[RMDB]
Background:
Conditions: 150 mM KOAc, 10 mM MgCl2 and 150 mM bicine (pH 8.5), 24 C. This 177-nucleotide RNA was probed chemically with DMS and 2A3. It was measured as part of the RMDB library TTRDEL.
RNA sequence: GGGAACGACUCGAGUAGAGUCGAAAAGAUAUGGACGUGGUAGGGAGCGUAUCGGAAACGAUCACGCAUCGAUCUACACACGUCCUAAGUCAAAAGGCGGUCCUCUUGUUCGCAAGAGGACCGCCAACGGUAAUCUUUUGUUCGCAAAAGAUUACCGAAAAGAAACAACAACAACAAC
Reactivity to DMS in 0.01 (KOAc 150mM, MgCl2 10mM, bicine 150mM(pH8.5), 24C), signal-to-noise 2, nucleotides 027 to 126: g000a060u000a300u010g000g030a020c000g030u000g000g000u000a010g020g000g000a020g030c020g050u000a060u000c020g010g010a100a070a240c010g000a030u000c250a000c000g010c000a170u000c150g020a060u000c010u000a010c000a160c000a030c000g010u020c000c000u000a010a060g010u000c020a070a070a080a180g010g010c000g010g000u000c030c000u000c020u000u010g000u000u030c200g010c010a070a040g000a020g050g020a000c000c000g000c020c000a000a000
Reactivity to 2A3 in 0.01 (KOAc 150mM, MgCl2 10mM, bicine 150mM(pH8.5), 24C), signal-to-noise 1, nucleotides 027 to 126: g000a030u080a040u130g010g010a000c000g000u000g050g000u040a020g080g000g000a000g000c000g000u010a010u020c020g000g000a050a060a010c010g000a010u110c180a010c030g000c010a100u290c040g050a030u000c020u000a010c300a020c000a000c130g010u000c000c000u000a000a010g040u010c030a100a020a000a120g000g020c000g010g000u040c060c000u070c060u110u000g080u150u190c300g020c190a000a000g000a000g040g000a000c040c010g030c000c010a010a000
The 2A3 profile rests on 2,158 reads. DMS adducts were read by reverse transcription with MarathonRT.